[RMDB]
RNA sequence: GGGAACGACUCGAGUAGAGUCGAAAACUUGUAACCCAUGUGGGGACAUUAAGAUGGUGGGACACUGGUUCGGUUCCUCGGAUCGGUUCUGAUGUGGGCAUGUUUCUGAGCUGCCCAGUCCAAGCUGUGAGUAAUUAGUGUUGAGUUGAGCGAAGGCCAGAUUUAGGAUGUUCGCAUCCUAAAUCUGAAAAGAAACAACAACAACAAC
Reactivity to 2A3 in 0.01 (KOAc 150mM, MgCl2 10mM, bicine 150mM(pH8.5), 24C), signal-to-noise 2, nucleotides 027 to 156: c020u030u070g030u190a050a100c010c010c070a110u170g110u210g040g000g000g020a040c020a050u210u240a080a100g030a140u090g050g040u030g020g040g010a030c010a020c020u030g030g010u040u050c030g000g010u060u070c030c010u030c060g000g010a020u050c000g010g000u120u020c030u070g060a100u110g040u050g100g010g020c000a040u160g050u000u090u000c150u130g060a050g030c000u000g020c000c000c020a000g000u000c010c010a030a020g000c060u030g000u020g120a050g020u100a090a130u100u180a050g020u060g050u030u050g010a060g020u010u020g030a040g020c070g050a050a010g050g020c060
Source information:
This 207-nucleotide RNA was probed chemically with 2A3. The reactions ran in a buffer of 150 mM KOAc, 10 mM MgCl2 and 150 mM bicine (pH 8.5), at 24 C. 2A3 is a SHAPE reagent: it acylates the 2'-hydroxyl of flexible nucleotides of all four kinds. It was measured as part of the RMDB library ARCHII.